[RMDB]
Structure probing data (DMS) for a 177-nucleotide construct. Values cover nucleotides 27 to 126. The DMS profile rests on 1,489 reads. The reactions ran in a buffer of 150 mM KOAc, 10 mM MgCl2 and 150 mM bicine (pH 8.5), at 24 C.
RNA sequence: GGGAACGACUCGAGUAGAGUCGAAAAAGGAGCCGAUGAAGGACGGUACUAACACCGAUAUGCUUCGGGGAGCUGUAAGUAAGCUUUGAUCCGGAGAUUUCCGAAUGGGGAAACCCUCCAUCCGUAAUGCACAACAUAACUUCGGUUAUGUUGUGCAAAAAGAAACAACAACAACAAC
Reactivity to DMS in 0.01 (KOAc 150mM, MgCl2 10mM, bicine 150mM(pH8.5), 24C), signal-to-noise 2, nucleotides 027 to 126: a100g030g020a120g040c010c020g000a050u010g020a140a180g000g000a080c020g000g000u020a010c040u000a130a040c060a100c010c010g020a020u010a030u010g000c010u000u000c010g000g000g010g010a000g010c010u020g020u000a090a180g000u000a090a020g010c000u000u010u020g000a010u010c010c010g000g020a020g010a010u000u020u000c000c010g000a100a050u020g010g000g020g000a150a120a140c070c090c000u000c030c020a070u000c010c050g030u060a160a080